[RMDB]
RNA sequence: GGGAACGACUCGAGUAGAGUCGAAAAAAAAAGAUAUGGAUAUCCGGGAGCUUCCCUGAGUGUAAGUGGGUCGGAAACGACCCAUUGAGCUCCUGGAAGCGAGGAUCGGAUAUCCUAAGUCAAAAAACUGUAUACUUACGUUCGCGUAAGUAUACAGAAAAGAAACAACAACAACAAC
Reactivity to DMS in 0.01 (KOAc 150mM, MgCl2 10mM, bicine 150mM(pH8.5), 24C), signal-to-noise 1, nucleotides 027 to 126: a060a080a010a160a150g020a040u000a300u000g000g000a010u000a010u000c000c000g050g000g020a110g030c010u010u010c000c010c050u010g000a020g000u000g020u000a300a010g030u040g000g000g080u000c000g010g000a090a060a150c010g000a020c000c000c000a000u000u000g000a300g020c020u020c000c000u020g010g000a010a010g020c000g000a070g030g010a030u000c000g000g000a020u000a010u000c020c020u010a010a080g010u000c050a000a050a130a060a040a170